[RMDB]
RNA sequence: GGGAACGACUCGAGUAGAGUCGAAAAACGUAUGGUACGCCAUCCGACCAUUGGGUAGAAGCGUUCAAUCAGCACCGUGACGGUGCAGAUGGGAAAUUGCCCAUGAUACGCACCAUACGUGGUGCGAAAAAGCCAUCGGUGUUCGCACCGAUGGCAACUUGCCUAAGCUGUUCGCAGCUUAGGCAAGAAAAGAAACAACAACAACAAC
Reactivity to 2A3 in 0.01 (KOAc 150mM, MgCl2 10mM, bicine 150mM(pH8.5), 24C), signal-to-noise 1, nucleotides 027 to 156: a000c020g010u030a050u020g030g000u020a020c200g030c020c000a050u020c030c020g270a200c000c020a060u000u040g000g000g000u010a010g050a020a030g070c040g090u060u040c010a020a050u000c000a020g000c000a000c010c010g180u270g300a130c120g000g000u000g000c010a000g010a040u000g000g020g040a050a120a120u050u060g000c020c000c000a000u120g010a000u010a020c020g000c000a000c000c010a010u030a070c080g080u040g000g020u020g000c070g090a050a040a000a040a020g020c000c000a000u000c010g030g020u020g030u010u060c160g000c150a000c000c000g000a000u000g000g000c020a000a000
An RNA of 207 nucleotides, treated with 2A3 and read out base by base. For 2A3 the reverse transcriptase was SuperScript II with manganese. It was measured as part of the RMDB library M2RFPK.